The record gives the reactivity of an RNA of 177 nucleotides to DMS and 2A3. The reactions ran in a buffer of 150 mM KOAc, 10 mM MgCl2 and 150 mM bicine (pH 8.5), at 24 C. As a SHAPE reagent, 2A3 marks flexible, mostly unpaired nucleotides at the ribose 2'-OH.
RNA sequence: GGGAACGACUCGAGUAGAGUCGAAAAGCCUAGCAAAAACAGCGGGGAAAGAAGACCCUGUUGAGCUUGACUCUAGUCUGAUAUUGCAUAGUGACCUAAAAGGUGUAGAAUAGGUGGGAGGGGCAACGAGAAUAGAUAGGUUCGCCUAUCUAUUCUCAAAAGAAACAACAACAACAAC
Reactivity to DMS in 0.01 (KOAc 150mM, MgCl2 10mM, bicine 150mM(pH8.5), 24C), signal-to-noise 4, nucleotides 027 to 126: g010c040c010u000a030g010c070a030a050a080a130a110c030a020g010c060g020g000g010g010a070a090a120g010a150a160g000a100c010c010c010u000g000u000u000g000a230g010c060u000u010g000a070c030u000c060u010a060g000u000c030u000g020a040u020a060u000u000g020c030a070u020a030g020u000g000a070c030c020u010a050a060a080a090g000g020u000g010u000a060g000a090a090u000a070g020g000u000g000g010g000a110g010g010g000g010c140a050a060c190
Reactivity to 2A3 in 0.01 (KOAc 150mM, MgCl2 10mM, bicine 150mM(pH8.5), 24C), signal-to-noise 3, nucleotides 027 to 126: g010c000c010u050a020g020c050a050a070a040a040a010c010a020g000c020g010g000g010g090a230a150a150g300a080a000g090a120c000c000c010u010g030u010u020g020a010g000c000u020u060g010a030c000u000c020u050a060g040u040c020u030g040a070u060a040u190u100g000c000a000u040a110g070u040g110a050c020c000u080a090a100a040a070g030g000u070g030u070a020g050a200a100u060a080g000g050u090g050g020g030a110g000g000g000g000c010a060a020c060